[RMDB]
Chemical mapping of a 177-nucleotide RNA with 2A3 and DMS. The RNA was probed in 150 mM KOAc, 10 mM MgCl2 and 150 mM bicine (pH 8.5) at 24 C. 2A3 is a SHAPE reagent: it acylates the 2'-hydroxyl of flexible nucleotides of all four kinds.

RNA sequence: GGGAACGACUCGAGUAGAGUCGAAAAGAUAUGGACCCACACAGCUUUUGACGAAUGGAUGGUCGGAAACGACCAUUAUUCGAUAAGCUGGUGGGUCCUAAGUCAAAGAUGGAGUUCGCUCCAUCAAGACUCAUUUAAACUUCGGUUUAAAUGAGUCAAAAGAAACAACAACAACAAC
Reactivity to 2A3 in 0.01 (KOAc 150mM, MgCl2 10mM, bicine 150mM(pH8.5), 24C), signal-to-noise 5, nucleotides 027 to 126: g010a010u080a050u110g000g010a000c000c020c000a000c020a010c000a010g040c010u140u250u300u300g300a180c050g000a000a000u050g090g080a010u010g020g000u010c030g020g030a070a090a050c010g000a000c000c000a000u000u000a000u010u010c000g010a010u030a040a000g010c000u000g000g000u000g000g000g000u000c000c000u000a010a000g000u000c010a010a010a040g000a000u010g000g000a000g020u130u130c260g150c180u000c000c000a000u000c000a000a020
Reactivity to DMS in 0.01 (KOAc 150mM, MgCl2 10mM, bicine 150mM(pH8.5), 24C), signal-to-noise 6, nucleotides 027 to 126: g000a040u000a300u000g000g010a010c000c000c000a000c000a150c020a010g010c000u000u000u010u000g020a280c140g010a010a010u000g020g020a000u000g000g010u000c000g030g000a080a090a160c000g020a020c000c000a000u000u000a010u000u000c000g010a170u000a020a010g030c000u000g000g030u000g010g010g010u000c000c000u000a000a060g010u000c030a100a140a140g010a010u000g000g010a030g030u000u020c300g020c010u000c000c000a010u000c010a090a140